[RMDB]
RNA sequence: GGGAACGACUCGAGUAGAGUCGAAAACUUGUAUCCCAGGUCAUUUGUCUCAACCUAUCUACGGAAUGGAGGUAGACAUGAUGCUAGGGGGCAUGGACAAGUGGCAUUGUGCACGGCACAGGAGGAACCUAUUAAAUGCGUUCGCGCAUUUAAUAGGAAAAGAAACAACAACAACAAC
Reactivity to DMS in 0.01 (KOAc 150mM, MgCl2 10mM, bicine 150mM(pH8.5), 24C), signal-to-noise 7, nucleotides 027 to 126: c100u000u000g020u010a120u000c010c000c010a170g010g010u000c010a020u000u010u000g020u000c000u010c210a180a150c060c010u000a120u000c020u000a100c060g020g000a170a180u000g010g020a050g010g010u010a030g000a090c050a040u000g010a110u000g010c160u000a080g010g010g000g000g020c080a080u000g010g000a030c020a020a030g010u000g000g010c020a120u000u000g020u000g000c030a130c150g010g010c020a020c020a050g000g010a080g010g010a120a230
Reactivity to 2A3 in 0.01 (KOAc 150mM, MgCl2 10mM, bicine 150mM(pH8.5), 24C), signal-to-noise 7, nucleotides 027 to 126: c030u040u120g040u090a130u040c010c010c000a000g040g040u010c010a020u000u030u100g010u010c010u000c050a080a080c010c000u090a120u120c010u040a050c100g080g130a130a090u140g090g010a070g070g040u040a020g030a040c030a050u100g040a020u100g090c060u100a110g030g020g010g030g030c040a070u150g040g030a010c010a030a020g000u000g030g000c010a030u030u070g020u010g010c090a070c270g110g000c020a010c010a030g010g060a030g010g050a030a030